[RMDB]
RNA sequence: GGGAACGACUCGAGUAGAGUCGAAAAUAAGACAGUAGGAGUUAUUUAUAACUUAAAAUUUAUCCUGCCGAGGCUAAAAUUGACUUGAACGUGAUGAUCUAUGAUCUUUCAAGCACUUUUUGCCGUGUCUAUUUGAGCAUUUCGAUGCUCAAAUAGAAAAAGAAACAACAACAACAAC
Reactivity to DMS in 0.01 (KOAc 150mM, MgCl2 10mM, bicine 150mM(pH8.5), 24C), signal-to-noise 3, nucleotides 027 to 126: u020a070a110g000a120c160a100g000u000a030g000g000a010g000u000u000a010u020u030u020a070u010a070a040c010u000u010a020a010a160a250u010u040u070a020u000c000c000u000g000c000c080g020a130g000g010c010u000a000a010a010a010u000u000g000a130c000u000u000g000a010a010c300g000u010g030a180u020g000a100u010c130u050a110u020g010a070u000c000u000u000u000c000a000a010g000c000a020c050u000u000u000u000u000g000c000c000g020u010g000
Reactivity to 2A3 in 0.01 (KOAc 150mM, MgCl2 10mM, bicine 150mM(pH8.5), 24C), signal-to-noise 6, nucleotides 027 to 126: u200a030a020g060a030c050a020g020u030a020g010g010a010g020u070u010a110u110u260u080a190u070a070a020c010u010u020a010a010a010a070u170u220u240a030u010c000c000u010g020c020c040g050a040g000g010c020u030a020a010a000a010u040u030g100a300c000u000u010g000a000a000c060g140u060g040a070u040g010a010u050c040u100a190u300g040a010u000c000u020u020u000c000a000a000g010c000a020c010u010u000u010u000u060g000c000c010g040u030g050
Chemical mapping of a 177-nucleotide RNA with DMS and 2A3.